[RMDB]
RNA sequence: GGGAACGACUCGAGUAGAGUCGAAAAGACGCCUUUAGAAGAAGAGGCUAGGGGGUAUUCCGGUGUGGGAUACUUAGUAAUAUGCAACACUAAUUGCAUAAGAUUGUAGGACGGAAUUUACAGUCUUUAGAGAUAAGCACGUUCGCGUGCUUAUCAAGACAUUAGCAGGCUUCGGCCUGCUAAUGUCAAAAGAAACAACAACAACAAC
Reactivity to 2A3 in 0.01 (KOAc 150mM, MgCl2 10mM, bicine 150mM(pH8.5), 24C), signal-to-noise 1, nucleotides 027 to 156: g050a000c070g030c000c010u150u090u130a170g040a300a050g000a040a020g000a030g020g000c000u050a070g000g070g000g000g000u020a080u040u030c030c010g190g120u220g000u120g060g020g000a000u000a050c020u020u030a050g040u070a030a080u050a020u030g000c000a020a020c030a010c220u060a070a120u090u020g000c000a010u010a060a000g020a050u000u020g030u040a000g020g080a020c030g030g000a080a030u050u080u060a060c020a020g000u000c000u030u100u090a150g040a000g010a030u000a000a000g020c000a000c000g020u030u080c220g020c020g050u000g000c000u000u000a000u000c000a000a000